[RMDB]
Source: RMDB library TTRINS, as collected in RNAgym. The record gives the reactivity of an RNA of 177 nucleotides to DMS. For DMS the reverse transcriptase was MarathonRT. The reactions ran in a buffer of 150 mM KOAc, 10 mM MgCl2 and 150 mM bicine (pH 8.5), at 24 C.

RNA sequence: GGGAACGACUCGAGUAGAGUCGAAAAGAUAUGGACAAGGACUGUGACGUACGAAUCGAUAAGAUGGUAUCGGAAACGAUACCCAUCUUUUGACGAUUACGUACGUCACAGUCCUUGUCCUAAGUCACCACUAACCAUUCUUCGGAAUGGUUAGUGGAAAAGAAACAACAACAACAAC
Reactivity to DMS in 0.01 (KOAc 150mM, MgCl2 10mM, bicine 150mM(pH8.5), 24C), signal-to-noise 1, nucleotides 027 to 126: g000a050u000a300u010g000g000a010c000a040a000g010g000a000c000u010g010u020g010a020c000g020u000a010c020g010a020a000u010c010g060a210u000a030a010g000a040u000g020g020u000a000u000c000g010g010a130a120a170c000g000a030u000a000c210c030c030a010u000c000u030u000u020u000g030a210c190g020a010u000u000a130c000g000u000a000c000g000u020c000a000c010a000g000u000c000c000u000u000g000u000c020c000u000a010a020g010u010c020a290